[RMDB]
RNA sequence: GGGAACGACUCGAGUAGAGUCGAAAACACCGUUCAUAAUCACUAACAGCCCUCUCAAUGAGUAUGGGGUACUGGGUUAUGCCAGCGGUUACGCCAUUUACGACCCCAAUGCGCUUGUUUUGUGGGACCCUGAGGAUCCAUUCGUGGAUCCUCAGGGAAAAGAAACAACAACAACAAC
Reactivity to 2A3 in 0.01 (KOAc 150mM, MgCl2 10mM, bicine 150mM(pH8.5), 24C), signal-to-noise 2, nucleotides 027 to 126: c120a070c000c010g010u110u010c000a030u030a050a040u050c010a020c260u210a200a080c000a070g040c000c000c000u030c020u000c030a090a190u280g030a010g010u170a120u280g020g000g080g010u080a050c030u010g000g000g000u040u020a000u030g060c110c050a000g000c000g020g000u000u030a000c050g060c030c000a030u110u070u170a060c100g020a070c000c040c000c000a040a070u080g020c070g020c130u030u060g000u050u020u040u000g060u060g040g000g080a050